Background: Source: RMDB library TTRDEL, as collected in RNAgym. Chemical mapping of a 177-nucleotide RNA with 2A3 and DMS. 2A3 adducts were read by reverse transcription with SuperScript II with manganese. For DMS the reverse transcriptase was MarathonRT. For DMS, 1,287 sequencing reads were counted. The 2A3 profile rests on 2,442 reads.
RNA sequence: GGGAACGACUCGAGUAGAGUCGAAAAGAUAUGGAGACUGACAUGCUUGGUGAUCGGAAACGAUCAGGAAGCAACAGCAGUACUCCUAAGUCAAACAUUCGGACUAAGUUCGCUUAGUCCGAAUGAAGUAGAUCAGAGGGUUCGCCCUCUGAUCUACAAAAGAAACAACAACAACAAC
Reactivity to 2A3 in 0.01 (KOAc 150mM, MgCl2 10mM, bicine 150mM(pH8.5), 24C), signal-to-noise 2, nucleotides 027 to 126: g040a000u060a010u130g000g010a030g010a010c000u010g010a090c000a130u080g020c020u060u050g300g110u030g170a010u000c000g000g000a080a050a060c020g030a020u020c000a020g160g270a000a000g000c010a030a040c010a150g070c000a030g010u090a300c000u000c040c010u000a070a030g080u030c040a020a160a000c010a010u000u010c000g000g000a000c000u020a010a000g040u060u180c270g130c150u000u010a000g000u000c000c000g000a000a000u000g000a000a000
Reactivity to DMS in 0.01 (KOAc 150mM, MgCl2 10mM, bicine 150mM(pH8.5), 24C), signal-to-noise 2, nucleotides 027 to 126: g000a040u000a300u010g000g000a000g010a060c000u000g000a120c050a290u000g020c000u010u000g020g020u000g000a010u010c000g000g000a110a090a120c010g010a000u000c000a030g010g020a030a010g000c000a020a080c300a160g010c000a000g000u010a090c000u000c000c010u010a030a070g000u000c070a170a140a300c030a010u020u000c000g000g000a010c010u000a010a010g000u000u020c300g000c020u000u000a000g000u000c000c000g030a010a000u000g000a070a170